Notes:
Structure probing data (DMS and 2A3) for a 177-nucleotide construct. Reactivities are given for positions 27 through 126. For DMS, 1,751 sequencing reads were counted. Reactivities are rounded to 0.1 and cut off at 0 and 3. DMS (dimethyl sulfate) methylates the pairing face of unpaired adenines and cytosines.
RNA sequence: GGGAACGACUCGAGUAGAGUCGAAAAGAUAUGGACUGUUUCCAGACAUGACCGCACAUCGGAAACGAUGUGAUGGUCAACAGCUGGACUGACAGUCCUAAGUCAAAUCCGCUCCUUCGGGAGCGGACACCCACAUACGGUUCGCCGUAUGUGGGUGAAAAGAAACAACAACAACAAC
Reactivity to DMS in 0.01 (KOAc 150mM, MgCl2 10mM, bicine 150mM(pH8.5), 24C), signal-to-noise 2, nucleotides 027 to 126: g000a000u000a140u010g000g010a000c000u000g000u000u000u000c000c000a020g000a030c130a300u000g000a010c000c010g010c020a020c010a010u000c000g000g000a020a020a100c000g020a010u010g010u000g020a030u000g000g030u000c000a070a030c210a170g000c000u000g000g000a050c300u000g000a020c000a000g020u020c000c000u000a000a080g010u000c010a100a150a210u010c000c000g000c000u000c000c000u000u020c270g020g000g000a010g000c010g010g010a000
Reactivity to 2A3 in 0.01 (KOAc 150mM, MgCl2 10mM, bicine 150mM(pH8.5), 24C), signal-to-noise 2, nucleotides 027 to 126: g020a010u050a000u140g010g000a000c010u000g000u010u040u040c010c030a000g020a050c140a300u300g000a010c020c000g000c020a020c000a000u000c000g000g030a020a030a030c010g000a000u010g000u010g050a160u190g000g000u010c020a020a000c010a030g000c000u000g000g030a030c090u050g000a000c010a000g000u030c000c000u000a020a010g030u000c040a030a030a250u000c000c000g000c000u020c010c020u020u090c300g130g000g000a000g020c000g000g000a000